Chemical mapping of a 177-nucleotide RNA with DMS and 2A3. It was measured as part of the RMDB library OK1LIB. Values cover nucleotides 27 to 126. The DMS profile rests on 23,712 reads.

RNA sequence: GGGAACGACUCGAGUAGAGUCGAAAACUCAGUGAGAAACUCUGGGCGAGAAGCACGUACCAGCAGAGACACCCUGAGGUAGAGGCUGCUCAGUUUAUAACCUUGAAAGGGAGGUAGACUUUCGGGGACUUUGAUACAUUUUCGAAUGUAUCAAAGUAAAAGAAACAACAACAACAAC
Reactivity to DMS in 0.01 (KOAc 150mM, MgCl2 10mM, bicine 150mM(pH8.5), 24C), signal-to-noise 8, nucleotides 027 to 126: c010u000c020a060g010u030g010a090g000a110a150a100c020u000c010u020g000g000g000c010g000a100g000a140a090g010c160a090c060g000u000a090c030c010a060g000c100a020g010a090g010a230c120a070c050c040c010u000g000a050g000g010u020a080g010a180g010g010c030u010g000c010u000c010a050g010u020u000u000a050u030a070a130c010c010u000u010g000a020a030a020g000g000g010a080g000g000u020a080g010a090c020u000u000u000c010g000g010g000g000
Reactivity to 2A3 in 0.01 (KOAc 150mM, MgCl2 10mM, bicine 150mM(pH8.5), 24C), signal-to-noise 6, nucleotides 027 to 126: c000u000c000a020g010u040g100a120g020a070a080a020c000u010c000u020g000g000g010c000g010a100g040a080a020g080c050a010c050g020u070a240c010c000a010g030c050a010g020a010g040a050c010a020c020c000c000u010g000a010g000g010u060a040g020a020g050g000c000u010g010c000u000c010a000g000u000u030u010a130u040a030a030c000c000u000u060g050a030a010a000g050g080g050a100g090g050u070a060g040a080c000u020u000u000c000g000g000g010g010